[RMDB]
RNA sequence: GGGAACGACUCGAGUAGAGUCGAAAAGAUAUGGACAAAUAGCUUUUGACGAAGGAGAAGGGUCGGAAACGACCCGUAACUUCGAUAAGCUAUUGUCCUAAGUCAUACCGGGGGUUCGCCCCCGGAAGCAUUAUAACUUGUUCGCAAGUUAUAAUGCAAAAGAAACAACAACAACAAC
Reactivity to DMS in 0.01 (KOAc 150mM, MgCl2 10mM, bicine 150mM(pH8.5), 24C), signal-to-noise 6, nucleotides 027 to 126: g000a050u010a300u000g010g000a000c000a020a020a030u000a000g010c000u000u000u010u000g010a180c130g010a010a000g010g000a140g010a150a210g000g010g020u000c000g010g000a060a070a230c010g010a010c000c000c000g010u000a040a190c010u000u010c010g010a080u000a010a010g020c000u000a010u000u000g000u000c000c000u000a030a050g010u000c020a140u000a110c000c010g000g010g010g000g020u010u010c260g010c000c000c000c000c000g000g000a010a070
Reactivity to 2A3 in 0.01 (KOAc 150mM, MgCl2 10mM, bicine 150mM(pH8.5), 24C), signal-to-noise 4, nucleotides 027 to 126: g020a020u080a040u180g000g000a000c020a030a240a060u010a010g000c020u150u130u130u220g240a210c040g010a010a000g040g030a020g010a040a030g000g010g000u020c020g030g000a070a080a020c020g000a010c000c000c000g000u000a010a000c000u000u000c000g010a010u010a020a010g010c000u010a000u000u010g010u000c000c000u000a090a030g040u010c020a010u070a150c000c010g000g000g000g000g010u030u070c200g110c000c000c000c000c000g000g000a000a000